Background
This 207-nucleotide RNA was probed chemically with 2A3. Conditions: 150 mM KOAc, 10 mM MgCl2 and 150 mM bicine (pH 8.5), 24 C. The 2A3 profile rests on 654 reads. Values are in units of 0.01, from 0 to 300, in steps of 10. The data come from the RNA Mapping Database (RMDB), library RNAMAK.

RNA sequence: GGGAACGACUCGAGUAGAGUCGAAAAGAGCAGUUUCGACUGCUCAAAAAUCCUAAGUCCUGUGGCGUCGAGAGAGGGAGCUCUCGGAAACGAGAGCGAAGAACUGGAAUGACGCGUAACAUCAGGAUAUGGAAAAAAAGCGACGUUCGCGUCGCAACUCGAUACGCAGAUUCGUCUGCGUAUCGAGAAAAGAAACAACAACAACAAC
Reactivity to 2A3 in 0.01 (KOAc 150mM, MgCl2 10mM, bicine 150mM(pH8.5), 24C), signal-to-noise 1, nucleotides 027 to 156: g000a000g000c040a030g000u090u110u110c060g150a090c010u020g020c000u010c000a000a000a000a000a000u060c030c030u140a230a080g020u000c030c000u010g000u000g020g050c020g000u020c040g050a070g010a010g010a040g300g000g030a000g000c000u000c000u000c010g000g000a030a020a000c000g020a000g000a010g030c020g010a050a000g040a000a000c010u010g060g070a070a030u090g000a000c000g040c000g060u050a080a060c070a180u200c050a020g000g000a000u020a040u030g010g000a050a000a000a000a000a040a000g000c110g010a010c060g000u060u300c300g020c000g070u000c000g000c000a000a100